[RMDB]
RNA sequence: GGGAACGACUCGAGUAGAGUCGAAAAGAUAUGGAACGCUCUACUUUUGACGGAGUCUUGGUCGGAAACGACCAGGGCUCCGAUAAGUAGUGCGUUCCUAAGUCAAACUUGUCCUUCGGGACAAGAACUUGGUUUGAACGUUCGCGUUCAAACCAAGAAAAGAAACAACAACAACAAC
Reactivity to DMS in 0.01 (KOAc 150mM, MgCl2 10mM, bicine 150mM(pH8.5), 24C), signal-to-noise 1, nucleotides 027 to 126: g010a100u000a300u000g000g010a000a000c060g000c000u000c000u000a000c000u030u010u010u000g000a250c140g010g020a010g020u000c010u010u000g010g040u000c040g000g010a140a080a230c010g010a000c000c000a000g000g000g010c000u010c010c000g010a010u010a020a040g010u010a000g020u000g010c000g000u000u000c000c020u010a000a100g000u000c010a140a250a250c020u000u000g000u000c000c000u000u010c210g010g000g010a000c000a000a000g040a070a250